[RMDB]
RNA sequence: GGGAACGACUCGAGUAGAGUCGAAAAGGAGGAAAUCGCGGAGUCUGCGUUUGAGGAUGCUGCGUUGGCGUCUAUUCGCUUGCUGGCGAUUGGUGACCAAGAGGCGUUUCCAUAUCGCCGUGUGGUGACUGACCUAGGAAUUCGUUCCUAGGUCAGUAAAAGAAACAACAACAACAAC
Reactivity to 2A3 in 0.01 (KOAc 150mM, MgCl2 10mM, bicine 150mM(pH8.5), 24C), signal-to-noise 4, nucleotides 027 to 126: g070g030a010g030g040a030a080a030u100c050g000c020g070g040a020g050u030c040u040g030c050g090u030u110u140g190a080g040g020a020u040g040c030u030g010c080g200u090u120g020g010c020g020u000c010u060a090u050u060c040g020c060u040u150g020c070u070g000g000c010g000a020u040u040g010g020u070g020a040c010c020a050a020g070a030g130g010c060g020u020u010u000c020c000a060u090a030u110c000g000c000c020g050u120g050u110g030g040u040g000
Reactivity to DMS in 0.01 (KOAc 150mM, MgCl2 10mM, bicine 150mM(pH8.5), 24C), signal-to-noise 5, nucleotides 027 to 126: g010g010a060g010g000a070a050a040u000c040g020c030g020g010a080g020u010c060u000g010c040g010u010u010u010g010a160g000g010a040u000g000c020u000g020c210g000u000u010g010g020c030g020u000c030u000a080u010u000c030g000c010u000u000g010c060u000g010g010c010g010a030u000u000g010g000u000g010a070c040c020a130a150g010a110g000g010c060g000u000u000u000c010c010a090u010a060u000c010g020c000c010g010u010g020u000g010g020u000g000